[RMDB]
RNA sequence: GGGAACGACUCGAGUAGAGUCGAAAACUUGCACUGUUUCGAACUGUUGAACUUGACCUCCAGAUCGUUUGCUGCUGUGAUCAGAGAGCUGCAUCCAGAAUUGAGAAACUGUGUUACUCUCUAUAAGAAAUGAUAGCGCUUUCGAGCGCUAUCAUUUAAAAGAAACAACAACAACAAC
Reactivity to 2A3 in 0.01 (KOAc 150mM, MgCl2 10mM, bicine 150mM(pH8.5), 24C), signal-to-noise 3, nucleotides 027 to 126: c010u000u020g020c010a000c070u010g000u020u010u000c020g020a050a020c020u040g050u080u050g130a170a070c070u030u090g040a100c020c000u000c000c010a050g000a200u030c000g040u040u020u080g070c040u030g010c010u020g000u050g090a090u060c050a030g030a000g000a010g050c110u070g020c000a020u030c020c040a010g030a220a200u170u100g040a100g030a020a080a000c020u030g030u000g000u050u070a030c000u020c010u010c000u000a050u030a150a200g020
Reactivity to DMS in 0.01 (KOAc 150mM, MgCl2 10mM, bicine 150mM(pH8.5), 24C), signal-to-noise 2, nucleotides 027 to 126: c060u030u010g000c020a010c080u030g030u000u030u000c050g010a060a100c100u000g000u010u060g000a090a080c110u040u000g040a190c060c030u040c040c040a080g000a060u000c070g010u000u000u000g020c030u000g000c130u000g030u050g000a110u020c120a020g000a090g000a040g030c080u020g000c090a050u000c070c050a040g000a080a070u020u020g030a190g000a050a020a070c060u000g030u020g030u010u010a130c180u000c040u030c050u030a140u000a050a110g000
Conditions: 150 mM KOAc, 10 mM MgCl2 and 150 mM bicine (pH 8.5), 24 C. This 177-nucleotide RNA was probed chemically with 2A3 and DMS. 2A3 adducts were read by reverse transcription with SuperScript II with manganese. The data come from the RNA Mapping Database (RMDB), library OK1LIB.